[RMDB]
RNA sequence: GGGAACGACUCGAGUAGAGUCGAAAAGCUCGCCCGGCUAGGCCCGAGCGAACACUUGAGGAACGGCUUGUCCCCUCUUGUGGAUUAGGACGUUCUACGUCCGGUCUGGCCCGUAGUUCGUCCGAAAGGCAAGGAUGUCGUUCGCGACGUCCUUGCCAAAAGAAACAACAACAACAAC
Reactivity to 2A3 in 0.01 (KOAc 150mM, MgCl2 10mM, bicine 150mM(pH8.5), 24C), signal-to-noise 2, nucleotides 027 to 126: g040c000u010c000g010c020c020c000g000g000c020u040a040g120g000c010c000c000g040a010g020c010g000a050a010c020a020c020u020u030g010a010g020g030a130a070c050g020g020c040u080u100g110u160c000c010c000c000u000c000u000u030g030u000g000g000a010u020u080a060g000g000a000c000g030u060u000c010u040a000c000g010u010c000c050g040g120u110c130u070g040g030c000c040c000g020u000a000g000u000u000c000g000u000c000c000g030a020a010a000
Reactivity to DMS in 0.01 (KOAc 150mM, MgCl2 10mM, bicine 150mM(pH8.5), 24C), signal-to-noise 2, nucleotides 027 to 126: g010c040u000c010g000c060c010c000g010g000c030u020a090g000g000c080c030c030g000a060g000c060g000a040a030c020a010c040u000u000g000a030g050g000a150a180c260g000g000c010u040u030g020u010c040c020c020c010u010c010u000u000g030u000g010g000a130u010u010a100g000g010a000c000g000u000u000c010u000a010c000g000u000c010c040g000g010u000c100u040g010g000c270c090c040g000u000a000g000u000u000c000g000u000c000c020g000a040a050a140